[RMDB]
RNA sequence: GGGAACGACUCGAGUAGAGUCGAAAAUACGAAAAUGCGUGAGAAGGUACAUAUAGGCACCAGGUAACCCUCCAAAGAAGAUUUAGGAAGAUGGAACCAGGUGGAGUUGGAGGUUACAAUGAGUUAACUGGUGCGAGCAAUUCGUUGCUCGCGCCAGAAAAGAAACAACAACAACAAC
Reactivity to DMS in 0.01 (KOAc 150mM, MgCl2 10mM, bicine 150mM(pH8.5), 24C), signal-to-noise 1, nucleotides 027 to 126: u040a070c040g010a040a060a090a050u010g030c080g000u000g020a060g000a060a030g000g040u020a040c030a040u030a020u010a020g010g000c050a080c060c020a020g040g030u000a030a100c110c020c000u010c000c020a040a010a040g000a000a140g000a050u000u010u020a210g000g000a030a060g010a030u010g000g000a120a020c070c030a070g030g000u000g000g010a150g070u000u060g000g030a030g040g000u000u000a020c120a060a110u010g000a030g050u000u030a000a200